[RMDB]
Structure probing data (DMS and 2A3) for a 207-nucleotide construct. For DMS the reverse transcriptase was MarathonRT. It was measured as part of the RMDB library M2RFPK.
RNA sequence: GGGAACGACUCGAGUAGAGUCGAAAAAGGUUCGCUGUGGUGCAACUCUUAUUAGUAACUAAUCCAAAGCAAGUAUAGGAGAACAGGUUUUUAACUAUUUUUAGGCAUAUAAAAAAUAGUAUUUGACAAAAUCGAUUGUCGUUCGCGACAAUCGAAAUUAACAAGACAGUUUCGACUGUCUUGUUAAAAAAGAAACAACAACAACAAC
Reactivity to DMS in 0.01 (KOAc 150mM, MgCl2 10mM, bicine 150mM(pH8.5), 24C), signal-to-noise 2, nucleotides 027 to 156: a100g000g020u000u000c060g030c010u000g020u000g000g030u000g000c050a060a050c040u000c040u000u010a050u030u020a100g000u000a060a100c070u000a100a110u000c080c030a070a180a100g020c020a090a150g040u000a160u000a060g000g010a050g010a060a090c050a150g000g010u020u000u010u000u000a060a130c010u000a010u000u000u000u000u000a080g000g000c080a110u000a090u030a000a000a010a000a060a070u000a000g010u000a280u000u000u000g020a190c050a050a050a080a200u000c020g010a060u020u000g000u000c010g040u000u000c230g020c010g000a060c000a000a000u000c010g000a000a010a030
Reactivity to 2A3 in 0.01 (KOAc 150mM, MgCl2 10mM, bicine 150mM(pH8.5), 24C), signal-to-noise 2, nucleotides 027 to 156: a000g040g030u040u070c070g010c060u080g030u060g040g020u060g010c030a010a070c010u020c030u070u130a140u050u060a100g050u070a070a090c080u060a090a070u060c050c050a120a050a050g030c030a030a020g030u030a100u040a130g020g050a020g010a060a030c040a070g010g030u000u010u000u020u050a010a010c000u000a010u030u010u010u020u040a020g060g000c040a030u140a000u100a270a020a020a030a000a020u000a010g030u020a080u080u060u140g050a030c030a010a170a000a050u010c000g010a010u000u000g000u000c000g000u050u030c170g000c000g070a000c010a000a000u000c000g000a000a000a000